Description
The record gives the reactivity of an RNA of 177 nucleotides to DMS and 2A3. The DMS profile rests on 5,628 reads. Values cover nucleotides 27 to 126. For 2A3, 13,020 sequencing reads were counted.
[RMDB]
RNA sequence: GGGAACGACUCGAGUAGAGUCGAAAACAAGCGAGUACGUCGUCGACGCGGACGUCUCGACCGGCGUCGGCGGCCCACAGGUGACCGUCGCCGUCCGCCCACCGAUCGGUCACACGGUCAGUGCCGGGUGCCUUUUAGGAUUCGUCCUAAAAGGCACAAAAGAAACAACAACAACAAC
Reactivity to DMS in 0.01 (KOAc 150mM, MgCl2 10mM, bicine 150mM(pH8.5), 24C), signal-to-noise 3, nucleotides 027 to 126: c150a080a090g030c040g000a070g030u020a030c130g000u010c000g040u000c010g010a020c040g020c010g000g040a060c020g000u020c070u020c060g020a060c060c000g010g010c000g030u000c010g010g010c010g000g000c000c050c030a100c080a110g000g010u020g010a050c020c010g020u010c050g060c040c050g000u010c050c090g010c050c010c000a070c090c070g000a040u000c030g000g010u000c100a130c070a070c020g000g000u000c080a050g000u000g000c020c000g020g030
Reactivity to 2A3 in 0.01 (KOAc 150mM, MgCl2 10mM, bicine 150mM(pH8.5), 24C), signal-to-noise 9, nucleotides 027 to 126: c060a030a040g100c020g070a040g090u140a060c040g020u020c000g010u030c020g020a020c040g020c020g100g010a040c030g130u050c070u080c090g100a070c010c010g210g030c010g010u010c010g010g000c000g000g020c000c000c000a180c040a060g000g110u060g030a060c010c010g000u030c010g010c020c020g050u070c020c020g030c010c010c000a030c010c020g040a050u080c050g000g050u080c020a010c000a000c020g020g020u070c050a070g030u020g090c010c010g070g010